The record gives the reactivity of an RNA of 177 nucleotides to 2A3 and DMS. The RNA was probed in 150 mM KOAc, 10 mM MgCl2 and 150 mM bicine (pH 8.5) at 24 C. Source: RMDB library OK1LIB, as collected in RNAgym. For DMS the reverse transcriptase was MarathonRT.
[RMDB]
RNA sequence: GGGAACGACUCGAGUAGAGUCGAAAAAAAUGCUCUAACAGUAUUUACUGAUGGUUCCAGCAAUGGAAAAGCAGCUUACACAGGGCUGAAAGAACGAGUAAUCAAAACUCCAUAUCAAUCGGCUCAAGUAAUUAACACAGUUCGCUGUGUUAAUUACAAAAGAAACAACAACAACAAC
Reactivity to 2A3 in 0.01 (KOAc 150mM, MgCl2 10mM, bicine 150mM(pH8.5), 24C), signal-to-noise 8, nucleotides 027 to 126: a000a000a010u120g000c020u060c020u060a140a060c020a020g040u050a150u140u210u160a060c020u020g110a140u060g070g100u040u010c000c000a010g030c050a070a150u050g010g020a000a030a060a020g050c030a010g000c030u100u110a040c100a020c050a100g000g030g000c000u000g010a010a010a020g000a010a010c050g000a000g020u070a100a200u150c150a050a040a040a070c010u000c010c020a030u060a040u280c010a010a030u010c000g010g000c000u000c010a010a000
Reactivity to DMS in 0.01 (KOAc 150mM, MgCl2 10mM, bicine 150mM(pH8.5), 24C), signal-to-noise 4, nucleotides 027 to 126: a060a030a050u010g000c010u010c100u010a080a100c060a060g020u000a050u020u030u010a090c040u000g000a080u020g000g050u020u010c020c000a040g010c170a170a110u000g010g010a060a050a060a050g010c020a010g000c110u010u000a060c150a080c210a090g000g000g010c010u050g020a020a040a240g000a020a030c300g000a000g000u010a050a160u040c300a070a080a020a010c010u000c000c170a130u040a090u000c000a020a300u000c010g020g000c000u000c010a070a050